[RMDB]
Source: RMDB library OK3TST, as collected in RNAgym.
The record gives the reactivity of an RNA of 207 nucleotides to DMS and 2A3.
Reactivities are given for positions 27 through 156.
Conditions: 150 mM KOAc, 10 mM MgCl2 and 150 mM bicine (pH 8.5), 24 C.
For DMS, 2,561 sequencing reads were counted.
RNA sequence: GGGAACGACUCGAGUAGAGUCGAAAAAAGGUAGAGAAGUCAGGCUCGUAGGGGCCCCCCUCAAACGGAAACUGGAGACAAACAUUGCCACUGUUGUUGCCAGGAACUACUUUCCUCAAUGGGAGCUCAAUCUGCAAUAUGAUCCCAGAGCACAAAGCUCUACAGUAACAUUCGUGUUACUGUAGAGAAAAGAAACAACAACAACAAC
Reactivity to DMS in 0.01 (KOAc 150mM, MgCl2 10mM, bicine 150mM(pH8.5), 24C), signal-to-noise 2, nucleotides 027 to 156: a020a070g020g000u000a070g000a120g010a070a140g010u000c050a100g010g020c040u000c020g000u000a220g000g050g040g000c010c000c060c010c010c040u000c060a060a090a150c150g000g000a080a050a090c040u000g000g010a120g030a050c040a040a050a070c050a150u000u010g030c050c050a170c200u000g030u000u000g010u000u010g000c020c030a090g000g010a060a080c010u020a090c050u000u000u010c060c010u000c050a060a180u010g000g020g000a050g040c000u000c030a080a090u000c030u000g040c050a080a120u010a080u000g000a090u000c000c010c010a090g000a120g000c050a080c060a070a060a170g020
Reactivity to 2A3 in 0.01 (KOAc 150mM, MgCl2 10mM, bicine 150mM(pH8.5), 24C), signal-to-noise 2, nucleotides 027 to 156: a000a000g030g010u040a030g010a000g010a210a010g030u090c080a040g000g020c020u050c080g110u120a060g040g040g020g010c000c000c000c000c000c000u080c060a140a080a030c100g070g000a090a050a070c020u010g010g000a060g010a000c030a030a090a010c020a080u050u110g050c020c050a090c070u030g030u000u000g000u010u020g010c030c000a020g000g010a040a000c000u080a020c000u060u020u000c000c000u000c030a040a080u050g000g000g050a060g020c020u030c090a020a090u010c010u070g000c030a040a060u150a110u270g030a000u010c000c000c020a030g010a000g030c060a010c040a090a090a020g030